This 207-nucleotide RNA was probed chemically with 2A3 and DMS. For 2A3 the reverse transcriptase was SuperScript II with manganese. The 2A3 profile rests on 758 reads. For DMS the reverse transcriptase was MarathonRT.

RNA sequence: GGGAACGACUCGAGUAGAGUCGAAAAACUAAUUUAAAAAAAGCAGGAAAAGUCCAUAUUCAAUCAUUAGGAGGUCUAAUGAAGACAUCUUUAUUAUUUGCAGUCUGAGCUAGUAUUAGAUUGUUGCAUAUGUAGCUGAGAAAGGUAGAUAAUUCUACCAUAUAGCUGAUUUCGAUCAGCUAUAUGGAAAAGAAACAACAACAACAAC
Reactivity to 2A3 in 0.01 (KOAc 150mM, MgCl2 10mM, bicine 150mM(pH8.5), 24C), signal-to-noise 1, nucleotides 027 to 156: a000c020u080a070a100u120u110u250a060a000a020a010a020a020a090g000c070a070g050g080a010a080a120a040g090u090c060c010a080u060a060u150u090c060a020a070u010c000a020u000u070a020g070g000a020g090g050u000c000u050a180a050u150g000a080a090g030a010c000a040u020c000u020u040u010a020u060u040a090u030u160u070g000c010a000g020u050c010u010g000a000g020c000u010a000g040u070a040u040u010a010g120a110u020u130g010u080u090g000c000a010u070a000u120g060u000a010g050c040u010g010a000g030a190a100a000g100g000u060a030g010a050u100a070a000u110u100c000u020a070
Reactivity to DMS in 0.01 (KOAc 150mM, MgCl2 10mM, bicine 150mM(pH8.5), 24C), signal-to-noise 1, nucleotides 027 to 156: a100c010u040a050a100u030u020u030a030a000a050a030a040a010a200g030c080a080g000g000a080a090a140a110g010u000c050c050a130u020a100u000u000c060a180a110u000c040a030u010u000a090g010g000a080g050g000u000c030u000a080a010u020g000a080a080g010a030c050a020u010c030u000u010u000a070u000u000a060u020u000u000g000c050a140g000u010c020u000g000a050g010c030u000a070g040u000a010u000u000a080g010a140u010u000g000u000u000g020c010a090u010a030u000g000u020a060g010c020u000g020a080g010a070a120a070g020g000u000a030g010a100u000a030a180u000u010c010u000a090